Chemical mapping of a 177-nucleotide RNA with 2A3 and DMS. Conditions: 150 mM KOAc, 10 mM MgCl2 and 150 mM bicine (pH 8.5), 24 C. As a SHAPE reagent, 2A3 marks flexible, mostly unpaired nucleotides at the ribose 2'-OH. For 2A3, 4,963 sequencing reads were counted. Values cover nucleotides 27 to 126.
RNA sequence: GGGAACGACUCGAGUAGAGUCGAAAAGAUAUGGAAUGGAGUGGAGUACAGAUUCGGAAACGAAUCGUACGUUGAAACUUUCAUUCCUAAGUCAAAACGCGUGCGAAUCUUCGGAUUCGCACGCGAAGAAUAAUGGCAUGUUCGCAUGCCAUUAUUCAAAAGAAACAACAACAACAAC
Reactivity to 2A3 in 0.01 (KOAc 150mM, MgCl2 10mM, bicine 150mM(pH8.5), 24C), signal-to-noise 2, nucleotides 027 to 126: g000a000u020a010u100g000g010a000a000u000g000g010a000g070u060g010g180a080g020u020a010c140a280g010a050u010u010c000g020g010a050a020a020c010g000a010a020u000c000g000u000a000c020g020u140u120g040a020a000a010c020u080u230u230c060a000u030u020c000c000u000a020a000g020u030c010a060a050a050a160c040g000c020g020u040g060c000g000a010a010u030c030u060u260c300g040g000a020u010u010c000g000c000a000c020g000c000g000a010a000
Reactivity to DMS in 0.01 (KOAc 150mM, MgCl2 10mM, bicine 150mM(pH8.5), 24C), signal-to-noise 2, nucleotides 027 to 126: g000a040u000a200u000g000g000a010a010u000g000g000a010g020u000g020g010a110g020u010a000c000a210g040a020u000u000c000g020g000a070a040a150c000g020a000a020u000c020g010u010a010c000g000u000u010g000a100a290a030c000u000u000u020c010a020u010u010c030c000u000a010a140g000u000c030a080a050a110a190c010g000c010g040u000g000c000g030a020a000u000c010u000u040c230g010g000a010u000u000c000g020c020a010c000g010c000g000a010a020
For 2A3 the reverse transcriptase was SuperScript II with manganese. The data come from the RNA Mapping Database (RMDB), library TTRDES. The DMS profile rests on 2,822 reads. For DMS the reverse transcriptase was MarathonRT.